[RMDB]
RNA sequence: GGGAACGACUCGAGUAGAGUCGAAAAGAAAGAAAGAAAGAAAUCUGACAGAAUGACGGAUUCGAUCCUUGUGGUCGGCGGGCCACCACGUCAUUCCUUCGCACUGUCUCCGGGCAGACCGCCAUAAAAAAGCGGAUCUACUUCGGUAGAUCCGCAAGUAAGGAAGGUGGUUCGCCACCUUCCUUACAAAAGAAACAACAACAACAAC
Reactivity to 2A3 in 0.01 (KOAc 150mM, MgCl2 10mM, bicine 150mM(pH8.5), 24C), signal-to-noise 1, nucleotides 027 to 156: g030a010a070a000g040a020a080a000g040a020a140a030g090a000a100a100u130c130u150g010a070c070a060g010a040a010u010g000a000c010g020g050a070u160u020c020g070a030u060c010c000u090u110g000u010g020g010u040c040g000g000c000g000g000g030c000c000a000c010c010a050c040g000u000c010a070u020u030c050c030u140u150c130g020c030a070c050u020g040u050c000u080c090c140g080g020g000c010a010g010a080c000c020g000c030c010a040u170a020a050a020a010a020a000g000c000g000g010a000u000c000u000a000c000u000u050c150g020g010u000a010g010a000u130c020c040g000c000a000a000